[RMDB]
RNA sequence: GGGAACGACUCGAGUAGAGUCGAAAAGGAGCUCGAUGCUAUGUGAUAACUAGCGCGUUAGUUAUCACCACUGAAACACGCGCCAGUGAAGUUAUGAUCGGGUGAUCGUAACUUAUAGCAUCGAGAAGAUAGGAGUGUGAUUCGUUACAUUUCUAUCAAAAGAAACAACAACAACAAC
Reactivity to 2A3 in 0.01 (KOAc 150mM, MgCl2 10mM, bicine 150mM(pH8.5), 24C), signal-to-noise 9, nucleotides 027 to 126: g150g010a060g030c000u000c000g000a000u000g000c000u000a000u010g010u000g010a010u000a010a000c000u010a010g060c090g010c070g220u090u010a000g000u000u000a020u010c000a000c000c000a010c000u030g030a080a180a010c100a020c080g120c030g040c060c000a000g000u000g020a000a000g000u000u000a010u010g010a000u010c060g140g190g270u300g030a000u000c000g000u000a000a000c000u000u010a000u000a000g000c000a000u000c000g000a000g000a000a000
Reactivity to DMS in 0.01 (KOAc 150mM, MgCl2 10mM, bicine 150mM(pH8.5), 24C), signal-to-noise 9, nucleotides 027 to 126: g000g010a120g010c010u000c000g000a010u000g000c000u000a000u000g000u000g010a010u000a010a010c000u000a030g000c220g010c190g010u020u000a010g010u000u000a010u000c000a010c010c010a000c010u010g010a110a100a090c080a070c110g000c080g010c110c010a010g010u000g000a010a010g000u000u000a000u000g000a010u000c000g030g020g030u070g010a010u000c010g010u000a000a010c000u000u000a010u000a000g000c000a000u000c000g000a010g000a030a050
This 177-nucleotide RNA was probed chemically with 2A3 and DMS. For 2A3, 195,474 sequencing reads were counted. The reactions ran in a buffer of 150 mM KOAc, 10 mM MgCl2 and 150 mM bicine (pH 8.5), at 24 C. It was measured as part of the RMDB library OK1LIB. 2A3 is a SHAPE reagent: it acylates the 2'-hydroxyl of flexible nucleotides of all four kinds.